[RMDB]
This 177-nucleotide RNA was probed chemically with 2A3 and DMS.
Values cover nucleotides 27 to 126.
RNA sequence: GGGAACGACUCGAGUAGAGUCGAAAACGGGGGACCACCAGGUUGCCUAAGGAGGGGUGAACCGGCCCAGGUCGGAAACGGAGCAGGUCAAAACUCCCGUGCUGAUCAGUAGUGGGAUCGCGCCUGUACGUAUUAGGACGUUCGCGUCCUAAUACGUAAAAGAAACAACAACAACAAC
Reactivity to 2A3 in 0.01 (KOAc 150mM, MgCl2 10mM, bicine 150mM(pH8.5), 24C), signal-to-noise 5, nucleotides 027 to 126: c030g020g000g000g010g010a030c000c000a020c030c000a040g010g000u050u070g100c020c010u060a100a040g070g010a070g020g070g010g000u080g070a030a020c000c010g020g010c010c010c010a030g030g030u010c000g050g020a120a100a030c010g020g000a060g030c050a030g010g060u100c000a030a040a040a100c050u010c000c000c000g000u040g020c020u040g010a110u070c030a030g090u170a030g060u080g020g040g000a040u060c040g000c010g000c040c000u040g030u040
Reactivity to DMS in 0.01 (KOAc 150mM, MgCl2 10mM, bicine 150mM(pH8.5), 24C), signal-to-noise 4, nucleotides 027 to 126: c070g020g030g010g030g030a130c070c020a130c140c120a100g010g030u010u000g000c090c050u020a090a060g010g020a110g000g000g040g020u010g000a050a100c070c020g000g000c050c040c130a120g010g020u010c020g030g000a070a100a090c060g000g020a120g020c080a020g030g000u010c190a060a080a080a100c140u000c000c000c000g030u000g000c010u000g030a070u050c080a070g000u000a030g010u020g020g000g000a070u000c070g000c070g000c010c010u020g010u000